[RMDB]
RNA sequence: GGGAACGACUCGAGUAGAGUCGAAAAACGAUGCCGCCCGAAUGUGGGCCCGAUUGCGGAUCCAUCUUGCCGAGUCCGGUCGCCGGGUGCGGAUCAACGACCUGUGGAUCGCGGCCGUCGCGGCAUCUGACACCUAGGUCUUCGGACCUAGGUGUCAAAAAGAAACAACAACAACAAC
Reactivity to DMS in 0.01 (KOAc 150mM, MgCl2 10mM, bicine 150mM(pH8.5), 24C), signal-to-noise 1, nucleotides 027 to 126: a060c100g010a000u000g010c000c030g000c000c260c030g000a120a090u030g020u040g010g000g050c060c010c050g040a210u000u040g000c120g000g020a010u000c000c050a060u070c200u000u020g070c000c030g000a250g000u000c040c000g000g040u000c040g040c030c020g020g000g030u010g000c030g000g000a190u010c070a050a240c050g000a040c000c000u100g010u000g000g010a000u000c010g010c040g050g000c000c100g040u040c300g010c010g000g030c000a000u020c000
Reactivity to 2A3 in 0.01 (KOAc 150mM, MgCl2 10mM, bicine 150mM(pH8.5), 24C), signal-to-noise 3, nucleotides 027 to 126: a000c070g010a010u000g000c000c000g020c020c040c020g110a120a130u300g000u100g050g010g050c000c010c010g300a300u040u280g060c090g010g000a020u010c030c030a010u030c070u090u070g000c030c000g040a010g010u000c000c020g060g000u120c110g120c120c030g070g030g110u300g280c020g000g070a090u190c050a010a060c080g020a000c000c020u050g060u170g180g000a000u040c080g000c040g280g000c000c000g010u040c000g010c000g000g000c000a000u000c010

Description:
Structure probing data (DMS and 2A3) for a 177-nucleotide construct. The RNA was probed in 150 mM KOAc, 10 mM MgCl2 and 150 mM bicine (pH 8.5) at 24 C. For 2A3 the reverse transcriptase was SuperScript II with manganese. It was measured as part of the RMDB library OK1LIB.